[RMDB]
RNA sequence: GGGAACGACUCGAGUAGAGUCGAAAACGAUCAGUACGAGUGCGUACUGAUCGAAGCUAGUGGUGACACUAGCAAGCAGCAGAUGUACAUGCCCGGAAUGUACAACAAUGUAGAUAACGCGCCAAUCUACAACUGCUGUAACCGGGAAGGCGCGAAAGCAUGUUGCAGUCUUCGGACUGCAACAUGCAAAAGAAACAACAACAACAAC
Reactivity to 2A3 in 0.01 (KOAc 150mM, MgCl2 10mM, bicine 150mM(pH8.5), 24C), signal-to-noise 1, nucleotides 027 to 156: c050g000a000u010c000a000g000u000a000c030g050a190g210u230g300c030g000u000a000c000u000g000a000u000c000g000a020a020g000c000u000a000g000u000g000g040u090g020a000c030a000c010u010a000g010c010a000a030g000c000a000g000c000a020g000a130u070g000u010a010c010a020u040g060c060c000c040g030g070a120a000u000g000u030a000c010a060a000c050a070a290u250g000u010a000g000a000u000a110a030c000g000c000g000c000c000a020a000u000c000u000a000c000a000a050c020u060g000c000u020g030u040a090a000c000c010g000g060g060a040a040g020g000c030g000c000g000a030a000a000
The record gives the reactivity of an RNA of 207 nucleotides to 2A3.